[RMDB]
RNA sequence: GGGAACGACUCGAGUAGAGUCGAAAAGUGAGGAUAGGAGAACGCUACGAUCCGAGGCCUACCGUAGAUUCUUCGAAGGGGCGACAGUGAGAAGCGUUAAGCUAACAGAGGUAAGCGUGAUGGGCUCGCUUUAUUAUAGGUUCGCCUAUAAUAAAGCAAAAGAAACAACAACAACAAC
Reactivity to DMS in 0.01 (KOAc 150mM, MgCl2 10mM, bicine 150mM(pH8.5), 24C), signal-to-noise 9, nucleotides 027 to 126: g010u000g010a080g010g010a100u000a120g010g010a060g010a040a040c100g010c030u000a040c050g010a110u000c050c040g020a150g010g010c030c020u000a260c080c020g010u000a070g010a170u000u000c080u000u000c030g010a130a150g000g010g000g010c030g010a060c220a070g000u000g000a120g000a090a060g010c040g010u000u010a050a120g010c040u000a060a110c120a080g010a060g010g010u010a060a060g020c060g010u000g000a070u000g000g000g000c070u000c140
Reactivity to 2A3 in 0.01 (KOAc 150mM, MgCl2 10mM, bicine 150mM(pH8.5), 24C), signal-to-noise 8, nucleotides 027 to 126: g080u060g020a030g040g020a070u050a090g030g040a060g020a050a020c060g000c050u040a030c030g040a040u000c040c030g010a050g090g010c010c010u030a070c060c010g000u000a010g000a160u170u060c040u060u030c070g050a090a040g010g020g000g000c010g030a020c020a030g030u040g080a080g020a060a010g010c000g020u070u050a040a010g010c020u040a110a010c030a050g050a030g080g030u070a070a010g030c030g020u040g030a050u060g020g030g010c040u030c060